[RMDB]
RNA sequence: GGGAACGACUCGAGUAGAGUCGAAAAGGUGUGUAUCGCACGGUUCCACCAGUGUGAGAAGGCUCCGGUGGAUUGCUCUAUUGGUUUGGGCUGUGUCCUGGUUGCGCGCUGAGGGUAUGACCAUUGGCUAAAUAUUAAAUUUCGAUUUAAUAUUUAGAAAAGAAACAACAACAACAAC
Reactivity to DMS in 0.01 (KOAc 150mM, MgCl2 10mM, bicine 150mM(pH8.5), 24C), signal-to-noise 8, nucleotides 027 to 126: g010g020u000g010u010g010u010a060u010c050g010c030a040c040g000g000u010u010c040c120a080c030c020a100g010u010g010u010g010a050g000a170a120g000g010c030u000c050c060g000g020u010g000g000a060u010u020g000c030u000c020u010a070u010u010g000g000u010u020u020g010g000g000c020u010g010u010g010u000c040c030u010g010g000u010u010g010c050g010c050g020c030u000g010a090g010g000g010u010a050u010g000a110c040c040a100u020u010g010g010
Reactivity to 2A3 in 0.01 (KOAc 150mM, MgCl2 10mM, bicine 150mM(pH8.5), 24C), signal-to-noise 6, nucleotides 027 to 126: g050g010u040g000u010g010u040a060u080c030g010c010a010c020g010g030u120u040c010c000a010c010c000a020g000u020g010u020g030a070g030a060a030g100g000c010u010c030c010g020g000u030g000g020a030u000u100g010c000u000c010u030a070u020u080g050g000u030u060u050g010g010g000c010u010g020u010g020u030c000c000u010g020g000u030u040g000c010g000c000g000c020u020g020a050g030g040g000u060a080u090g040a030c000c010a050u030u060g040g010
Chemical mapping of a 177-nucleotide RNA with DMS and 2A3. The reactions ran in a buffer of 150 mM KOAc, 10 mM MgCl2 and 150 mM bicine (pH 8.5), at 24 C. As a SHAPE reagent, 2A3 marks flexible, mostly unpaired nucleotides at the ribose 2'-OH. For DMS, 41,863 sequencing reads were counted. Source: RMDB library OK1LIB, as collected in RNAgym. 2A3 adducts were read by reverse transcription with SuperScript II with manganese. The 2A3 profile rests on 11,611 reads.